[RMDB]
RNA sequence: GGGAACGACUCGAGUAGAGUCGAAAACUGGUCCUCGUCGCGCGAUCCGGCGCUCAUCGAGAAUCGACCGGCGCUGAGAAGGACACGAAGACGCGCCUUGGCCGCGUCGCCCUUGAUGCGUUCAGCUAUGCGAGCCACGGUUCGCCGUGGCUCGCAUAAAAGAAACAACAACAACAAC
Reactivity to 2A3 in 0.01 (KOAc 150mM, MgCl2 10mM, bicine 150mM(pH8.5), 24C), signal-to-noise 1, nucleotides 027 to 126: c000u100g020g000u050c000c050u020c000g030u150c050g000c000g040c000g070a190u020c030c000g180g000c000g000c110u040c040a110u090c080g000a000g140a150a090u110c050g040a190c050c120g000g060c000g000c000u020g000a000g040a160a070g070g000a050c000a070c130g040a010a110g000a000c050g000c000g110c000c000u170u080g040g080c220c000g000c000g000u000c000g000c000c000c000u030u060g020a050u000g000c010g200u250u060c050a030g090c100u010

Structure probing data (2A3) for a 177-nucleotide construct. 2A3 adducts were read by reverse transcription with SuperScript II with manganese. For 2A3, 422 sequencing reads were counted. The RNA was probed in 150 mM KOAc, 10 mM MgCl2 and 150 mM bicine (pH 8.5) at 24 C. High 2A3 reactivity points to a flexible backbone, as in loops and unpaired stretches. Source: RMDB library OK1LIB, as collected in RNAgym.